[RMDB]
RNA sequence: GGGAACGACUCGAGUAGAGUCGAAAACGUGAACAUCGCUCUGCUAAGUCCCGUCGUUCUUCCAGUCAGAGCGAGAUUGUAAGCAACCUUAUGCGCAAUGAAGACAUAGAGGGACUUCUACAAGAAGCACGAUACGGCAUUUCGAUGCCGUAUCGUGAAAAGAAACAACAACAACAAC
Reactivity to 2A3 in 0.01 (KOAc 150mM, MgCl2 10mM, bicine 150mM(pH8.5), 24C), signal-to-noise 3, nucleotides 027 to 126: c040g080u080g160a080a000c010a090u080c000g000c000u000c010u010g050c070u080a050a000g060u100c020c000c010g000u000c010g040u000u000c020u050u050c020c000a050g080u060c010a000g020a000g040c010g000a020g000a000u000u080g010u060a140a140g000c040a060a050c000c050u130u120a050u080g030c130g010c020a010a080u170g030a160a020g030a040c020a020u060a020g120a090g100g030g000a020c000u010u000c000u020a120c020a090a080g070a050a000g100
Reactivity to DMS in 0.01 (KOAc 150mM, MgCl2 10mM, bicine 150mM(pH8.5), 24C), signal-to-noise 1, nucleotides 027 to 126: c120g040u090g070a140a100c290a140u000c010g000c020u000c040u000g000c050u000a090a170g000u000c160c010c070g030u050c000g000u000u010c010u010u000c000c020a130g030u040c010a000g000a000g040c000g000a020g000a090u030u040g000u000a090a130g070c010a110a200c090c060u000u040a000u000g070c040g000c030a020a010u040g000a090a090g000a050c030a010u050a130g050a080g000g000g000a090c000u000u000c130u000a010c210a090a130g000a030a030g010
Conditions: 150 mM KOAc, 10 mM MgCl2 and 150 mM bicine (pH 8.5), 24 C.
This 177-nucleotide RNA was probed chemically with 2A3 and DMS.
For DMS the reverse transcriptase was MarathonRT.
For DMS, 1,367 sequencing reads were counted.
For 2A3, 1,591 sequencing reads were counted.